An RNA of 170 nucleotides, treated with DMS and 2A3 and read out base by base.
RNA sequence: GGGAACGACUCGAGUAGAGUCGAAAACGGUGCCGAGUGAGGCCUAUCCCGGGGAUCGGUGAAUCGUCCCGGAAUGGGGACUCCGAGGGCCCCUUCCGAAGUGACGGGGGGGGGUCACUAGGAACACAUGGUACGCUCUUCGGAGCGUACAAAAGAAACAACAACAACAAC
Reactivity to DMS in 0.01 (KOAc 150mM, MgCl2 10mM, bicine 150mM(pH8.5), 24C), signal-to-noise 4, nucleotides 027 to 129: c050g020g030u050g010c040c000g020a000g010u050g010a120g030g050c050c050u020a040u000c060c000c020g040g070g000g070a050u040c030g060g040u000g020a040a050u050c010g020u050c020c020c000g010g010a110a020u030g000g030g010g010a070c060u100c020c030g000a150g010g020g040c040c020c020c010u040u000c000c010g030a170a150g010u060g000a100c170g000g000g010g000g000g000g000g010g010u050c060a000c030u010a120g030g010a020a140c100a130c080a130u030g030
Reactivity to 2A3 in 0.01 (KOAc 150mM, MgCl2 10mM, bicine 150mM(pH8.5), 24C), signal-to-noise 4, nucleotides 027 to 129: c070g000g000u040g030c000c020g020a040g050u140g040a080g000g040c000c000u030a050u040c010c000c000g000g010g020g030a130u170c050g080g000u160g120a210a040u150c050g010u040c000c000c000g000g070a020a020u080g000g010g000g040a080c010u000c000c000g000a110g000g000g000c000c000c000c000u020u000c000c000g040a190a110g130u130g100a030c100g000g000g000g000g000g000g000g000g010u020c000a040c060u030a030g010g070a040a020c070a010c010a020u080g040
For DMS the reverse transcriptase was MarathonRT. It was measured as part of the RMDB library 15KLIB. The RNA was probed in 150 mM KOAc, 10 mM MgCl2 and 150 mM bicine (pH 8.5) at 24 C.